This 177-nucleotide RNA was probed chemically with DMS and 2A3. 2A3 adducts were read by reverse transcription with SuperScript II with manganese. The RNA was probed in 150 mM KOAc, 10 mM MgCl2 and 150 mM bicine (pH 8.5) at 24 C.
[RMDB]
RNA sequence: GGGAACGACUCGAGUAGAGUCGAAAAGCACACUCUCUCCAUUUCUCUACCGUUCAUGCAGCGGUUGAUCGAUUGGGUUGCUGGUUGAUUGAUCGAUCGAUGGUCAGGAGUUGGAAGAGAAUUGGAGGUGUUAUAAUACGUUCGCGUAUUAUAACACAAAAGAAACAACAACAACAAC
Reactivity to DMS in 0.01 (KOAc 150mM, MgCl2 10mM, bicine 150mM(pH8.5), 24C), signal-to-noise 4, nucleotides 027 to 126: g020c140a090c180a120c120u010c060u010c010u000c000c000a010u000u000u010c000u000c010u000a100c010c010g010u010u000c010a050u010g010c040a140g010c020g010g000u000u000g000a010u000c010g010a010u000u010g020g020g010u000u010g020c090u000g000g010u010u010g020a040u000u000g010a010u000c000g000a000u000c000g020a030u010g010g010u010c030a050g000g000a030g010u000u010g050g000a230a030g000a020g000a010a010u000u010g000g010a030g010
Reactivity to 2A3 in 0.01 (KOAc 150mM, MgCl2 10mM, bicine 150mM(pH8.5), 24C), signal-to-noise 5, nucleotides 027 to 126: g090c030a040c010a010c120u060c000u000c010u000c030c010a020u020u030u010c010u010c000u010a060c000c000g030u020u010c010a020u040g010c010a010g040c020g010g000u000u000g010a000u000c010g000a010u010u020g080g050g110u140u190g060c110u110g090g090u090u040g010a010u000u020g000a010u000c000g000a010u010c010g020a050u070g090g110u200c020a020g010g020a010g020u240u300g080g000a030a000g010a000g010a000a010u020u020g010g000a000g000